[RMDB]
RNA sequence: GGGAACGACUCGAGUAGAGUCGAAAACGUUCUCGGUACCCUCGAUUUCCGUCUCUUCUUGCAUGCGUAUCCAACCGCCUCGCGGCUCCGCCGACCCCCAUGGACCGCGCUGCGGCACCAUGCCCACUCUAUUACGACUUUUCGAAGUCGUAAUAGAAAAAGAAACAACAACAACAAC
Reactivity to DMS in 0.01 (KOAc 150mM, MgCl2 10mM, bicine 150mM(pH8.5), 24C), signal-to-noise 8, nucleotides 027 to 126: c090g010u010u000c000u000c010g020g010u000a060c040c020c010u000c050g000a110u000u010u010c040c030g020u010c020u010c020u000u010c020u000u000g020c090a050u000g020c060g030u010a080u010c050c110a090a160c070c020g000c030c040u010c050g020c040g000g010c090u000c020c020g010c050c070g000a300c020c010c000c010c000a110u010g000g010a230c020c010g000c020g020c080u010g000c020g010g010c070a040c030c030a040u000g000c020c030c010a100c140
Reactivity to 2A3 in 0.01 (KOAc 150mM, MgCl2 10mM, bicine 150mM(pH8.5), 24C), signal-to-noise 9, nucleotides 027 to 126: c030g030u030u010c020u010c000g010g030u080a060c010c010c000u030c030g070a090u040u050u050c040c020g050u010c020u000c000u100u020c010u030u060g030c030a060u080g030c020g030u050a070u040c030c020a020a060c020c010g010c010c010u010c010g020c010g020g020c070u010c010c010g020c010c010g060a080c000c010c000c000c000a020u030g010g000a010c000c000g010c020g040c060u080g000c010g010g000c010a020c010c000a020u060g000c000c010c000a050c020
The record gives the reactivity of an RNA of 177 nucleotides to DMS and 2A3. It was measured as part of the RMDB libraries RFM100 and RFMREP. DMS adducts were read by reverse transcription with MarathonRT. The RNA was probed in 150 mM KOAc, 10 mM MgCl2 and 150 mM bicine (pH 8.5) at 24 C.